This 207-nucleotide RNA was probed chemically with DMS and 2A3.
[RMDB]
RNA sequence: GGGAACGACUCGAGUAGAGUCGAAAAUUAUCCAGGCAUGGUGGUGUGCACCUUUAAUCCCAGCUACUUGGAAGCUGAAGUCACAAGAAUCACUUGAACCUGGGAGGCAGAGGUUGCAAUGAGCUGAGAAUGUACCACUGCACUCCAGCCUGGGUGGAGUGCUAGGUAGCUUCGGCUACCUAGCACUAAAAGAAACAACAACAACAAC
Reactivity to DMS in 0.01 (KOAc 150mM, MgCl2 10mM, bicine 150mM(pH8.5), 24C), signal-to-noise 3, nucleotides 027 to 156: u000u020a050u000c000c010a030g010g040c020a160u000g030g030u010g020g040u000g060u010g020c080a050c030c010u000u000u030a120a210u000c000c010c000a070g020c040u000a070c070u000u000g030g000a070a090g050c030u010g010a080a140g010u000c090a210c060a080a100g000a160a140u000c070a070c060u000u010g000a030a090c230c020u000g000g000g010a050g020g020c130a100g030a130g010g040u000u000g010c030a050a110u010g010a100g000c030u020g010a150g010a140a140u000g020u000a070c020c020a070c040u000g020c030a030c000u000c010c020a040g010c010c020u010g000g030g100u000g000g000
Reactivity to 2A3 in 0.01 (KOAc 150mM, MgCl2 10mM, bicine 150mM(pH8.5), 24C), signal-to-noise 6, nucleotides 027 to 156: u140u060a020u020c000c000a000g020g000c120a150u050g010g070u040g060g020u030g050u050g010c020a020c010c000u020u100u040a030a020u010c000c010c000a010g010c040u080a100c020u090u050g050g040a100a050g040c080u120g100a090a030g110u120c070a050c010a140a070g040a070a080u110c040a030c110u060u050g020a020a020c010c010u000g010g000g020a010g020g000c090a040g000a010g030g020u110u100g010c010a030a100u140g020a050g040c080u060g030a030g080a240a110u200g020u090a040c020c030a020c050u020g000c030a020c010u010c010c010a000g010c000c010u010g000g010g000u020g020g030
Source: RMDB library OK3TST, as collected in RNAgym. For DMS the reverse transcriptase was MarathonRT. Conditions: 150 mM KOAc, 10 mM MgCl2 and 150 mM bicine (pH 8.5), 24 C. Values are in units of 0.01, from 0 to 300, in steps of 10.